[RMDB]
RNA sequence: GGGAACGACUCGAGUAGAGUCGAAAAGUUCGCCCAUCUGGUAGAGCUCAAACGCAUAGUAGUCGACGAGUUCCUUGCUGUCUGCGAUCCGCUGAUAGGCGGCCCGCCCUUCGAGAUCGGGCGUGAAUCGCGUACAAAUUUUCGAAUUUGUACGCGAAAAAGAAACAACAACAACAAC
Reactivity to 2A3 in 0.01 (KOAc 150mM, MgCl2 10mM, bicine 150mM(pH8.5), 24C), signal-to-noise 2, nucleotides 027 to 126: g020u030u050c030g020c000c010c010a050u030c040u070g080g000u050a060g010a000g020c020u050c170a150a150a070c030g080c020a020u060a080g140u030a020g090u130c020g030a050c060g010a020g020u090u010c000c030u030u100g010c040u070g010u120c030u030g000c030g080a130u070c050c040g010c010u080g070a210u080a150g080g000c000g000g030c000c050c010g040c000c000c020u040u070c050g100a080g000a120u160c120g000g000g010c010g000u010g010a030a070
Reactivity to DMS in 0.01 (KOAc 150mM, MgCl2 10mM, bicine 150mM(pH8.5), 24C), signal-to-noise 3, nucleotides 027 to 126: g010u010u000c020g030c010c000c050a070u000c070u000g000g020u000a050g020a100g010c010u000c170a040a090a110c120g010c020a070u010a070g010u000a070g000u000c040g010a090c100g010a190g010u000u020c010c010u000u000g000c040u000g010u000c090u000g000c030g030a100u000c020c030g000c000u000g010a170u000a110g000g000c000g000g000c090c060c010g020c010c020c000u010u000c070g000a080g010a060u000c210g020g000g000c010g030u000g000a080a150